An RNA of 207 nucleotides, treated with 2A3 and DMS and read out base by base. For 2A3 the reverse transcriptase was SuperScript II with manganese. Source: RMDB library RNAMAK, as collected in RNAgym. The reactions ran in a buffer of 150 mM KOAc, 10 mM MgCl2 and 150 mM bicine (pH 8.5), at 24 C.
RNA sequence: GGGAACGACUCGAGUAGAGUCGAAAAGGGGUCAAGACGAAACGUAUAGGGAGCCUCGGGCACUGAAGCCUCCACGGUGUCUCUAGCGUGGGCAUCGAUCUAUACGUAGUAGUCUUGACGGAGGCACCCAAAACGUCACGUCUUCGGACGUGACGAACACUAUCUUACUCUUCGGAGUAAGAUAGUGAAAAGAAACAACAACAACAAC
Reactivity to 2A3 in 0.01 (KOAc 150mM, MgCl2 10mM, bicine 150mM(pH8.5), 24C), signal-to-noise 5, nucleotides 027 to 156: g180g010g040g000u000c000a000a000g010a000c030g080a230a100a010c000g000u000a000u000a000g010g010g000a010g000c000c010u020c000g000g000g000c010a000c000u010g020a090a020g010c000c000u000c010c000a010c010g010g000u010g010u010c040u020c090u230a130g140c090g120u300g000g010g000c030a070u300c090g000a000u000c000u010a000u000a000c010g010u030a040g020u020a000g000u010c010u000u000g000a000c000g000g000a000g000g000c000a060c000c000c000a030a100a020a040c020g000u000c000a000c000g000u000c000u040u110c290g110g000a000c000g000u000g000a000c000g000a000a000
Reactivity to DMS in 0.01 (KOAc 150mM, MgCl2 10mM, bicine 150mM(pH8.5), 24C), signal-to-noise 2, nucleotides 027 to 156: g000g020g000g010u000c010a000a030g010a030c000g010a140a260a130c020g010u000a030u000a030g020g020g010a010g020c010c000u000c060g000g010g000c000a070c010u000g000a040a120g000c000c000u000c020c040a300c000g000g050u000g010u010c020u000c060u000a170g000c170g000u020g010g060g000c000a270u000c140g000a040u020c010u000a030u010a030c030g000u000a030g030u000a300g010u000c000u010u000g010a010c000g000g010a000g010g000c030a140c020c010c030a070a080a050a160c030g040u000c000a030c000g000u010c000u000u000c300g020g000a020c000g010u010g010a000c000g000a030a140